[RMDB]
RNA sequence: GGGAACGACUCGAGUAGAGUCGAAAACCGAGCGGGUGAGGGCGAGAUCGAGGGCGCGCGCGGUGUCGAGCGAGAUGAAGGCCUCGAUGAUGGCCUGGUCGUUGGAGAACCGCACCCACUCCUCGGCGUUCCGCCGAGCAUUCGUGCUCGGCGGAACAAAAGAAACAACAACAACAAC
Reactivity to DMS in 0.01 (KOAc 150mM, MgCl2 10mM, bicine 150mM(pH8.5), 24C), signal-to-noise 1, nucleotides 027 to 126: c030c020g000a020g020c140g030g000g000u020g000a150g000g000g000c010g000a110g010a070u000c060g030a130g030g000g030c040g010c090g030c120g020c000g000g010u000g000u010c030g000a100g000c000g010a050g000a150u020g000a140a000g020g000c000c000u000c160g020a150u010g000a070u020g010g020c000c010u020g000g030u000c010g020u010u010g000g010a140g000a090a030c000c020g020c000a300c030c020c040a060c010u000c020c010u000c020g020g000c150
Reactivity to 2A3 in 0.01 (KOAc 150mM, MgCl2 10mM, bicine 150mM(pH8.5), 24C), signal-to-noise 2, nucleotides 027 to 126: c000c000g000a000g040c110g040g030g000u090g010a210g020g140g000c040g020a050g000a090u140c170g050a070g060g230g000c000g000c000g000c010g000c000g000g030u050g020u050c040g030a050g000c000g000a020g040a160u270g170a110a010g020g020c010c000u010c090g120a140u270g020a050u090g020g000c000c000u010g050g020u040c030g020u000u110g070g020a060g020a010a080c040c000g010c000a030c000c010c000a000c010u050c020c010u000c000g040g000c050
Conditions: 150 mM KOAc, 10 mM MgCl2 and 150 mM bicine (pH 8.5), 24 C. Structure probing data (DMS and 2A3) for a 177-nucleotide construct. Source: RMDB library OK2TST, as collected in RNAgym.